[RMDB]
RNA sequence: GGGAACGACUCGAGUAGAGUCGAAAAGCGGAGGGUGGCGGGGUAUCAAUUAUCGAUGUGAGCAAUGAUCGAAAAGUUACGUAUGUUCUUCAUAGAGAUAAAUUAUUAUGCCUUACGCCUGGUUGACAAAGUAUGACGAAUUCGUUCGUCAUACUUUAAAAGAAACAACAACAACAAC
Reactivity to DMS in 0.01 (KOAc 150mM, MgCl2 10mM, bicine 150mM(pH8.5), 24C), signal-to-noise 5, nucleotides 027 to 126: g010c090g000g000a140g010g010g020u030g020g000c090g000g000g000g010u030a020u010c080a070a070u010u010a030u000c010g000a130u000g010u000g000a040g020c150a030a040u010g020a090u020c040g000a080a080a080a100g010u010u020a060c060g020u020a060u020g000u000u010c040u000u010c030a020u000a040g010a190g000a040u000a020a050a070u020u020a090u030u020a070u010g000c010c020u010u010a080c080g010c040c020u010g000g010u010u000g020a080c150
Reactivity to 2A3 in 0.01 (KOAc 150mM, MgCl2 10mM, bicine 150mM(pH8.5), 24C), signal-to-noise 6, nucleotides 027 to 126: g060c050g060g110a150g080g050g110u130g020g060c120g030g010g030g000u010a020u080c070a060a090u050u030a020u030c020g010a010u030g020u030g020a010g020c040a020a120u130g020a080u100c040g070a060a030a080a030g120u160u150a060c040g040u080a080u160g060u020u020c000u080u040c010a050u030a040g060a000g000a030u040a040a130a000u070u060a030u090u050a020u120g010c010c010u050u100a030c000g010c000c000u020g020g000u040u050g010a040c070